[RMDB]
RNA sequence: GGGAACGACUCGAGUAGAGUCGAAAAGGGUGGACAACAGAAGAACAGUCAAAAGGGCCAGCAUAUAGAGGGCAGACAGACACAAUCCAGGCCAAUUCAAAAUGUCCCAGGCCCUCACAGAACAAUCCAUAUGCUAGUACUUCGGUACUAGCAUAUGAAAAGAAACAACAACAACAAC
Reactivity to 2A3 in 0.01 (KOAc 150mM, MgCl2 10mM, bicine 150mM(pH8.5), 24C), signal-to-noise 5, nucleotides 027 to 126: g060g040g010u070g020g010a010c010a100a010c050a110g080a100a000g070a100a060c010a060g060u060c040a080a080a020a040g000g030g010c010c010a010g030c020a030u170a020u050a160g020a070g020g000g020c010a010g040a030c030a010g020a000c010a010c000a150a090u010c030c010a010g040g010c010c000a010a010u060u080c020a030a070a020a150u090g030u030c010c000c000a010g030g030c000c010c010u010c000a060c040a020g130a120a010c030a030a040u040c030
Reactivity to DMS in 0.01 (KOAc 150mM, MgCl2 10mM, bicine 150mM(pH8.5), 24C), signal-to-noise 6, nucleotides 027 to 126: g000g020g030u000g000g000a060c070a070a080c150a090g010a090a060g010a070a060c110a060g000u020c080a030a030a110a100g010g000g010c020c010a060g010c060a030u020a090u030a140g000a050g010g010g020c030a120g010a130c170a060g010a070c100a060c200a080a090u020c040c030a060g010g020c030c030a060a090u030u020c090a060a040a090a060u010g000u010c010c010c050a100g000g000c000c010c000u000c040a060c190a040g000a070a060c180a050a050u040c140

Chemical mapping of a 177-nucleotide RNA with 2A3 and DMS. For 2A3 the reverse transcriptase was SuperScript II with manganese. The data come from the RNA Mapping Database (RMDB), library OK1LIB.